Chemical mapping of a 177-nucleotide RNA with 2A3 and DMS.
The RNA was probed in 150 mM KOAc, 10 mM MgCl2 and 150 mM bicine (pH 8.5) at 24 C.
It was measured as part of the RMDB libraries RFM100 and RFMREP.
DMS adducts were read by reverse transcription with MarathonRT.
RNA sequence: GGGAACGACUCGAGUAGAGUCGAAAAAUACAUGGGCCCAUGAAAUUGAUGAACUGAGAGCUGCUUCCAGCCCUGCGCGCACCAUCUGGAAUUCCAGUCUGAGGUUACAAUUAGAACUCCUGACCCCUUAACGUCUUCGAUUCGUCGAAGACGUUAAAAAAGAAACAACAACAACAAC
Reactivity to 2A3 in 0.01 (KOAc 150mM, MgCl2 10mM, bicine 150mM(pH8.5), 24C), signal-to-noise 5, nucleotides 027 to 126: a000u110a020c100a070u090g020g030g010c000c000c040a020u080g070a050a110a060u190u130g040a090u100g030a110a010c040u060g030a010g020a010g110c010u020g020c010u080u020c000c000a020g030c040c000c000u030g000c070g010c020g020c020a020c010c000a050u090c010u000g000g040a030a060u160u030c020c000a000g040u000c040u060g020a040g000g010u040u030a030c020a000a020u090u060a050g040a080a020c000u030c000c020u020g080a100c000c000c000c000
Reactivity to DMS in 0.01 (KOAc 150mM, MgCl2 10mM, bicine 150mM(pH8.5), 24C), signal-to-noise 4, nucleotides 027 to 126: a050u040a080c080a060u020g000g010g000c030c020c030a050u020g000a070a090a080u040u020g010a180u010g000a080a100c040u010g010a090g010a090g000c020u000g010c090u000u010c040c050a080g010c110c010c020u000g000c050g000c070g020c060a060c050c020a030u010c030u010g000g010a140a110u010u020c130c010a030g000u000c010u000g010a080g000g000u030u010a050c080a020a060u030u010a050g000a070a060c050u000c000c010u000g010a100c010c010c010c110